[RMDB]
RNA sequence: GGGAACGACUCGAGUAGAGUCGAAAAGGGAAGGCCGUGAAGGCGAAGGUUAGCUUCCGGUUUAAGGAAGUGUAGAGACUUCCUGAUACUACUGUCAGAAACUACUGUUGCUGCGUGCUUCAGGCACGAGAGCCGUAGGAUUCGUCCUACGGCUCUCAAAAGAAACAACAACAACAAC
Reactivity to DMS in 0.01 (KOAc 150mM, MgCl2 10mM, bicine 150mM(pH8.5), 24C), signal-to-noise 5, nucleotides 027 to 126: g000g000g000a020a060g010g000c000c000g000u030g000a100a130g000g020c020g000a090a110g010g010u020u010a090g020c010u000u010c020c010g000g000u000u010u010a140a050g000g000a020a010g010u000g010u000a110g030a280g010a100c010u000u000c010c000u000g000a130u050a080c060u010a060c080u000g000u020c040a060g000a110a070a050c070u010a050c100u000g000u000u010g010c040u000g000c060g020u010g000c010u000u010c140a020g010g000c050a060c100
Reactivity to 2A3 in 0.01 (KOAc 150mM, MgCl2 10mM, bicine 150mM(pH8.5), 24C), signal-to-noise 3, nucleotides 027 to 126: g060g010g050a070a010g090g000c040c020g090u160g070a080a020g080g010c060g000a050a020g030g030u070u070a010g000c000u040u000c030c030g040g090u040u190u160a040a030g000g000a000a000g000u010g030u080a100g050a010g010a050c010u020u010c010c020u010g030a030u030a160c060u030a030c050u060g090u090c050a020g050a020a080a010c070u120a040c020u040g010u030u080g010c020u040g010c000g040u020g000c000u010u120c090a100g050g030c010a010c050

Conditions: 150 mM KOAc, 10 mM MgCl2 and 150 mM bicine (pH 8.5), 24 C. Structure probing data (DMS and 2A3) for a 177-nucleotide construct. It was measured as part of the RMDB library OK1LIB. The 2A3 profile rests on 1,846 reads. 2A3 adducts were read by reverse transcription with SuperScript II with manganese. DMS (dimethyl sulfate) methylates the pairing face of unpaired adenines and cytosines.